[RMDB]
RNA sequence: GGGAACGACUCGAGUAGAGUCGAAAAGCUAGUCGGUGACGACUAGCAGCCACGACUAAGGUCGUGGGAAGAUGCGCACAAACAGCACAGUGGCAUCAAUAACUACAUCAUGUGCUGAAACCGGAUUAACGGAUAACAUUAAAAUUUAAGAUGUAGGCCAUUAUAUACGCUUCGGCGUAUAUAAUGGAAAAGAAACAACAACAACAAC
Reactivity to 2A3 in 0.01 (KOAc 150mM, MgCl2 10mM, bicine 150mM(pH8.5), 24C), signal-to-noise 4, nucleotides 027 to 156: g000c000u000a000g000u000c010g080g040u080g050a050c010g000a000c000u000a000g000c000a000g020c000c000a010c000g000a000c010u090a130a170g200g010u020c000g000u010g010g010g000a040a010g050a010u020g010c150g110c080a000c020a030a180a030c000a050g000c020a000c000a000g010u010g030g000c010a010u010c040a010a060u190a110a010c020u020a010c000a020u020c000a040u090g010u000g010c010u000g020a040a010a010c010c000g030g080a220u090u260a180a100c020g000g040a040u070a150a040c090a040u140u250a040a030a070a040u160u170u080a050a070g000a000u010g020u020a000g000g060
Reactivity to DMS in 0.01 (KOAc 150mM, MgCl2 10mM, bicine 150mM(pH8.5), 24C), signal-to-noise 1, nucleotides 027 to 156: g000c010u000a030g010u000c010g020g030u000g020a190c000g030a070c010u000a120g010c000a050g050c000c020a040c000g000a030c000u000a060a140g000g000u000c010g110u000g010g030g000a140a050g020a060u000g020c030g000c120a090c100a060a150a230c020a030g000c000a010c050a280g030u000g000g000c030a090u000c020a130a060u030a110a070c000u010a080c010a030u000c010a160u000g000u000g000c020u020g040a110a130a180c010c040g000g010a230u000u030a060a130c000g040g020a170u010a030a060c110a010u000u050a030a000a130a190u030u010u000a040a100g000a040u000g010u020a040g060g030
Notes: Source: RMDB library OK3TST, as collected in RNAgym. An RNA of 207 nucleotides, treated with 2A3 and DMS and read out base by base. For DMS the reverse transcriptase was MarathonRT. Values cover nucleotides 27 to 156.